[RMDB]
RNA sequence: GGGAACGACUCGAGUAGAGUCGAAAAUCAUGUGCCUUCGGGCACAUGAAAACAUCCAGGAUCGGCAAAGGAUGGAAAUAAUGGCGAACCAAUAAGGAGAAAAAAGACCCGAGUUCGCUCGGGUCAACUAAUGACACAACUUCGGUUGUGUCAUUAGAAAAGAAACAACAACAACAAC
Reactivity to 2A3 in 0.01 (KOAc 150mM, MgCl2 10mM, bicine 150mM(pH8.5), 24C), signal-to-noise 1, nucleotides 027 to 126: u040c010a000u000g010u000g020c000c030u060u110c280g020g000g000c000a000c010a000u010g000a000a000a000a000c020a030u040c000c010a040g110g090a110u090c070g080g000c070a080a030a090g050g020a080u110g010g060a050a140a000u160a030a120u070g060g000c010g000a000a010c010c000a000a020u170a210a090g080g050a090g130a120a080a030a000a020a020g010a000c030c020c000g000a000g000u020u060c150g030c040u020c000g000g000g010u000c000a000a020
Reactivity to DMS in 0.01 (KOAc 150mM, MgCl2 10mM, bicine 150mM(pH8.5), 24C), signal-to-noise 2, nucleotides 027 to 126: u010c000a010u010g000u010g020c000c020u000u010c210g030g040g030c000a000c000a000u000g000a010a060a130a100c110a030u000c010c050a070g000g000a080u000c120g010g000c080a100a110a110g000g000a080u000g000g000a080a050a090u000a080a080u000g000g030c020g000a110a030c000c040a060a060u020a060a080g020g020a160g030a000a060a100a090a120a190g010a010c010c000c000g050a010g030u000u010c250g020c010u000c000g010g010g020u010c000a000a010